RNA sequence: GGGAACGACUCGAGUAGAGUCGAAAACUAGCCUCCGCUUAUACGCGCGCUCACGGAGGCAGAUGCUCGAACAACAGCGCGCGGGCAUUCAGUCGCAGAGCCAAUACACGCGGCCGUCGUGACUAGAGUCUGCGGCUUGAUUCGUCGGGCUGUAGACAAAAGAAACAACAACAACAAC
Reactivity to 2A3 in 0.01 (KOAc 150mM, MgCl2 10mM, bicine 150mM(pH8.5), 24C), signal-to-noise 9, nucleotides 027 to 126: c010u010a030g000c000c000u000c010c000g050c110u230u160a130u070a220c020g000c000g000c000g000c010u040c030a070c020g000g000a010g000g000c000a000g030a030u120g020c020u030c110g100a120a040c030a050a020c020a070g000c000g000c010g000c000g000g010g000c030a100u100u080c040a010g020u010c010g000c020a020g010a020g070c010c010a090a050u170a180c100a020c130g100c070g030g000c020c020g170u150c030g000u000g010a010c020u020a050g000a010
Reactivity to DMS in 0.01 (KOAc 150mM, MgCl2 10mM, bicine 150mM(pH8.5), 24C), signal-to-noise 9, nucleotides 027 to 126: c040u000a130g010c000c000u000c000c000g020c300u010u000a100u010a090c040g010c020g020c020g010c020u000c250a140c050g000g000a030g010g010c010a020g000a080u010g010c040u000c040g010a080a070c110a070a100c120a040g010c010g020c020g020c010g010g000g000c100a070u010u010c070a030g010u000c010g010c010a090g000a180g010c020c030a070a120u010a120c170a090c170g010c150g010g020c060c070g000u010c160g010u000g000a100c050u000a110g010a200